This 207-nucleotide RNA was probed chemically with DMS and 2A3. DMS adducts were read by reverse transcription with MarathonRT. For 2A3, 548 sequencing reads were counted. The reactions ran in a buffer of 150 mM KOAc, 10 mM MgCl2 and 150 mM bicine (pH 8.5), at 24 C.
RNA sequence: GGGAACGACUCGAGUAGAGUCGAAAAGAUGGGUACAAUUCACUCAUGUAAAGCCUACAAUUCAGUGGUUUUAGUAUACUCACAGAGUUGUGCAGCCACACUACAACCAAUUUUAAAACAUUUUAAUCGCCCCAAAAGGAAGCCUUGUACUCCUCAAAAAAUACCUCCGAUUCGUCGGAGGUAUUUUAAAAGAAACAACAACAACAAC
Reactivity to DMS in 0.01 (KOAc 150mM, MgCl2 10mM, bicine 150mM(pH8.5), 24C), signal-to-noise 1, nucleotides 027 to 156: g030a050u000g010g040g020u020a070c050a100a210u000u010c110a070c030u000c060a090u020g040u000a010a060a140g020c050c020u010a100c100a000a100u020u010c140a110g110u020g020g020u000u020u000u000a080g010u000a050u000a040c040u000c040a030c020a170g030a220g020u000u010g020u000g030c150a120g020c020c150a040c060a060c050u010a030c060a050a080c040c060a050a130u000u000u000u020a020a150a020a160c020a090u010u010u000u050a030a110u000c070g000c020c020c000c040a070a060a090a130g010g000a080a060g000c020c060u010u000g010u000a070c060u010c010c000u000c000a010a050
Reactivity to 2A3 in 0.01 (KOAc 150mM, MgCl2 10mM, bicine 150mM(pH8.5), 24C), signal-to-noise 2, nucleotides 027 to 156: g040a040u010g000g010g010u070a070c040a070a050u120u210c040a040c080u050c030a020u090g070u220a060a020a030g000c050c000u090a080c090a120a160u090u170c060a050g010u020g000g110u010u040u010u090a020g010u020a040u030a050c000u020c040a120c060a040g100a020g070u250u120g010u010g070c030a000g060c020c000a020c000a010c040u050a010c000a020a000c050c030a040a020u000u140u040u140a060a110a070a060c020a040u070u060u070u170a150a090u080c030g020c030c000c000c040a010a180a070a000g000g020a150a020g010c010c000u010u010g000u000a000c060u020c010c090u110c070a050a060